[RMDB]
RNA sequence: GGGAACGACUCGAGUAGAGUCGAAAAUCUUUCCAGGGAGAGUGAAACCUCAGCAGCCAGCCAGGAACCUGGCGGGAGAAGGGGAGCUUGAAUUAUCCCAGUAACAUGAGCUCACAUUGAUUGCAUGUUUCCCUGGAGCUAAGUGCUUUGGGGUAUCAUCGAGAAUACUUUUCGAAGUAUUCUCGAUAAAAGAAACAACAACAACAAC
Reactivity to 2A3 in 0.01 (KOAc 150mM, MgCl2 10mM, bicine 150mM(pH8.5), 24C), signal-to-noise 1, nucleotides 027 to 156: u060c000u020u040u030c030c000a000g000g000g020a060g000a000g030u100g020a180a090a080c010c000u020c030a120g040c040a030g070c010c010a030g050c040c000a080g080g030a100a110c060c010u000g020g000c010g000g000g010a090g010a040a010g000g020g010g000a000g010c020u050u020g050a050a060u110u040a040u090c000c010c010a000g010u100a010a000c010a020u040g030a020g100c030u100c050a060c040a070u050u170g060a150u150u110g080c060a030u040g080u030u040u040c000c020c000u000g010g000a000g000c000u020a100a130g100u150g100c000u020u010u060g010g030g040g010u130a050u260c030
Reactivity to DMS in 0.01 (KOAc 150mM, MgCl2 10mM, bicine 150mM(pH8.5), 24C), signal-to-noise 1, nucleotides 027 to 156: u000c040u010u010u000c020c010a070g020g000g000a090g000a130g020u010g000a130a130a080c040c000u030c000a140g000c090a180g000c040c020a060g000c000c010a140g020g030a130a130c140c030u010g040g050c040g000g020g010a120g010a150a120g020g040g010g000a050g010c030u000u000g020a080a120u000u000a070u000c030c030c010a230g020u000a080a060c070a100u000g000a030g040c000u000c030a050c080a130u000u000g010a050u000u020g010c000a040u000g010u010u000u000c010c000c000u000g020g000a030g010c040u000a060a170g020u010g020c000u000u010u020g000g040g030g000u000a050u000c050